[RMDB]
RNA sequence: GGGAACGACUCGAGUAGAGUCGAAAAUGUAAGUACACUCUAUGAUGUCCAUAUAAUGACAAAAUCACCUAAUUGAUGCAUUUCUCAGUACAAAUCUCUGUCAUUAAGCGAUGCAUUACUGUAUAUGACAAUCAUAGCCAUUCGUGGCUAUGAUUGUAAAAGAAACAACAACAACAAC
Reactivity to DMS in 0.01 (KOAc 150mM, MgCl2 10mM, bicine 150mM(pH8.5), 24C), signal-to-noise 3, nucleotides 027 to 126: u010g010u000a040a100g040u010a070c140a040c040u000c070u000a040u010g040a110u000g000u000c020c080a080u000a110u000a040a050u000g020a070c140a040a060a080a250u000c060a060c040c050u000a050a140u010u000g000a010u000g000c010a010u000u000u000c020u000c030a040g010u020a030c070a050a060a080u000c150u010c130u020g010u010c090a050u000u000a060a030g010c050g030a010u000g000c030a000u000u000a050c170u000g000u010a050u020a100u000g000
Reactivity to 2A3 in 0.01 (KOAc 150mM, MgCl2 10mM, bicine 150mM(pH8.5), 24C), signal-to-noise 3, nucleotides 027 to 126: u140g010u040a040a060g060u030a030c030a030c030u000c030u030a040u070g060a030u030g000u000c020c050a020u110a030u050a150a130u120g050a030c050a040a100a010a050u140c070a090c060c020u110a130a110u050u120g020a000u020g000c010a010u000u020u020c020u000c030a020g000u070a040c030a080a300a260u120c150u060c060u110g050u040c020a030u040u090a030a000g000c040g020a000u020g000c000a000u050u040a060c060u060g080u120a060u070a080u290g000